RNA sequence: GGGAACGACUCGAGUAGAGUCGAAAAUAAUUGGAUUUGCAGUGGCAGUGGCCAUUUCAUCAGCUGAGUGCAUCCGAGGGCACCAGGCACCAUGGUACAUAAGCACUCGUGUCGUGACCAAAGGGGCUGGUGCCUAGGGCUUCGGCCCUAGGCACCAAAAAGAAACAACAACAACAAC
Reactivity to 2A3 in 0.01 (KOAc 150mM, MgCl2 10mM, bicine 150mM(pH8.5), 24C), signal-to-noise 1, nucleotides 027 to 126: u160a000a130u060u080g030g000a130u300u150u170g010c040a000g080u000g000g050c060a130g010u180g220g040c000c000a000u010u040u010c160a300u000c000a000g010c040u000g080a020g000u000g100c000a000u170c130c120g070a210g000g080g000c000a000c000c000a110g090g080c000a030c050c040a000u110g050g000u080a080c000a000u140a000a010g050c000a000c000u000c000g000u050g000u000c000g000u000g060a000c070c090a000a000a000g090g010g010g000c090